[RMDB]
RNA sequence: GGGAACGACUCGAGUAGAGUCGAAAAACAACAGAUAGCUGGAACCAGCGUAGAAUUCUACGCAUAUCCAUAGCGAAUGGUACCUGUAAAGAAAAUAAUGACGAAUGUACAAGUACCAACAGUUGUCAAUGCCAUGGUGAUGUCAAUCACAUAUGCAACCUGCAUAGCGGUUCGCCGCUAUGCAGGUAAAAGAAACAACAACAACAAC
Reactivity to 2A3 in 0.01 (KOAc 150mM, MgCl2 10mM, bicine 150mM(pH8.5), 24C), signal-to-noise 2, nucleotides 027 to 156: a000c020a020a020c030a010g120a180u080a060g000c050u010g050g000a130a220c070c060a080g000c000g000u000a000g010a200a290u290u100c000u030a000c000g000c000a000u030a020u120c010c000a030u130a110g010c000g060a130a070u070g010g000u000a000c000c000u030g000u070a160a090a000g180a130a230a000a050u300a070a090u130g070a000c030g020a060a030u070g000u010a000c000a010a000g000u000a000c000c000a000a020c050a080g030u000u010g020u030c020a000a050u010g000c050c000a030u050g000g050u000g000a000u030g140u300c120a110a040u020c000a000c000a030u040a000u080g000c010a000